[RMDB]
RNA sequence: GGGAACGACUCGAGUAGAGUCGAAAAACUAUGCAGGAGCGAUACGUCGCUCCUGCAUAGAAUCUGAUGACAAUCUCAUUACAUGAAUCAUACAUGUUUAUAAAUUAUCCAUCUUUCGGCUGAAAAAAGACAGUGAAGUUUUCGAACUUCACUGUCUAAAAGAAACAACAACAACAAC
Reactivity to 2A3 in 0.01 (KOAc 150mM, MgCl2 10mM, bicine 150mM(pH8.5), 24C), signal-to-noise 1, nucleotides 027 to 126: a000c000u000a000u000g000c000a030g000g020a000g060c000g010a000u000a060c210g030u000c000g000c000u000c000c000u000g010c040a080u000a000g000a010a000u000c030u100g080a020u130g020a030c060a000a130u000c020u000c070a060u160u070a040c000a000u020g120a270a060u100c030a000u060a290c000a000u030g050u000u240u110a170u150a040a000a050u180u130a010u030c030c000a020u030c110u010u220u060c080g000g080c100u130g040a160a020a000a000a090
Reactivity to DMS in 0.01 (KOAc 150mM, MgCl2 10mM, bicine 150mM(pH8.5), 24C), signal-to-noise 1, nucleotides 027 to 126: a000c000u010a000u000g000c000a010g000g000a000g000c020g130a000u000a020c210g000u000c050g090c010u000c100c010u020g020c070a000u000a000g020a050a020u000c000u000g000a070u040g000a150c210a050a080u000c200u000c150a070u010u050a070c000a010u050g000a200a070u000c160a110u050a070c040a050u000g010u000u050u000a000u020a030a010a010u070u000a100u120c150c010a110u000c060u000u000u000c060g000g000c070u020g000a000a020a050a090a070
The record gives the reactivity of an RNA of 177 nucleotides to 2A3 and DMS.
The reactions ran in a buffer of 150 mM KOAc, 10 mM MgCl2 and 150 mM bicine (pH 8.5), at 24 C.
Reactivities are rounded to 0.1 and cut off at 0 and 3.
For DMS, 1,118 sequencing reads were counted.
For 2A3 the reverse transcriptase was SuperScript II with manganese.